[RMDB]
RNA sequence: GGGAACGACUCGAGUAGAGUCGAAAAGUACUAUGCCCGCCAUUAUUGAUGCAUGCUCCACCUCCCACUCCUUAAUAGUUGCUUUGAAGUUUCCUUUCGGUGGGUUCUGCAGCGUCUUUUUCAGAAAUUCCAAUACUUCGUUCGCGAAGUAUUGGAAAAAAGAAACAACAACAACAAC
Reactivity to DMS in 0.01 (KOAc 150mM, MgCl2 10mM, bicine 150mM(pH8.5), 24C), signal-to-noise 1, nucleotides 027 to 126: g010u000a070c090u000a040u000g020c000c020c010g050c070c050a130u000u010a090u010u020g010a110u010g020c050a050u000g020c030u000c050c020a050c040c020u000c010c000c010a100c070u000c090c080u010u010a050a100u010a070g010u000u010g000c050u000u010u000g000a040a170g000u010u000u000c000c020u000u010u020c040g030g010u000g010g000g000u010u010c110u000g020c030a080g000c040g020u000c020u000u020u000u010u000c100a100g000a070a040a130

Overview:
An RNA of 177 nucleotides, treated with DMS and read out base by base. The RNA was probed in 150 mM KOAc, 10 mM MgCl2 and 150 mM bicine (pH 8.5) at 24 C. DMS adducts were read by reverse transcription with MarathonRT.